[RMDB]
Annotation
The record gives the reactivity of an RNA of 207 nucleotides to 2A3 and DMS.

RNA sequence: GGGAACGACUCGAGUAGAGUCGAAAAGGGUGAGACCUAGGAACCGUAGGGGUAUUCUCAAAGGAAGCUUUUGCAGUGACGCUCAUGUAAGUGGGAUAUAACAACAGAACUCGUAUGAGUAGCCUAAUAAAUCGGACCUUCUUCGGAAGGUCCGAAACAAUAUACACGAGUUCGCUCGUGUAUAUUGAAAAGAAACAACAACAACAAC
Reactivity to 2A3 in 0.01 (KOAc 150mM, MgCl2 10mM, bicine 150mM(pH8.5), 24C), signal-to-noise 4, nucleotides 027 to 156: g030g020g010u070g010a090g040a050c010c040u050a060g030g060a040a070c060c020g020u090a050g000g050g010g000u040a110u100u070c070u040c040a050a040a020g080g020a070a030g020c020u040u070u060u060g010c040a010g010u010g040a060c050g000c010u020c010a040u040g030u090a080a080g020u050g020g050g000a010u060a010u030a110a080c070a010a010c020a040g040a040a040c030u020c050g060u130a070u150g010a020g030u050a020g040c000c000u070a110a050u100a100a130a030u040c000g000g000a000c000c000u000u010c010u020u030c060g080g000a000a000g000g000u000c000c000g000a000a000a000
Reactivity to DMS in 0.01 (KOAc 150mM, MgCl2 10mM, bicine 150mM(pH8.5), 24C), signal-to-noise 3, nucleotides 027 to 156: g000g010g000u000g000a150g010a090c030c020u000a130g020g010a070a070c050c030g040u000a110g000g020g000g040u000a090u000u000c030u000c030a060a090a160g000g000a090a100g010c040u010u000u000u000g040c030a110g000u010g020a090c050g040c030u000c010a040u000g000u010a090a180g020u000g010g020g000a130u000a060u010a120a080c070a070a090c040a150g000a070a050c040u000c040g000u000a100u020g010a060g020u000a070g020c040c030u000a030a100u000a040a080a110u010c010g010g020a030c000c000u000u000c020u000u000c300g030g030a020a010g010g010u000c000c000g000a000a010a060
For DMS, 5,175 sequencing reads were counted.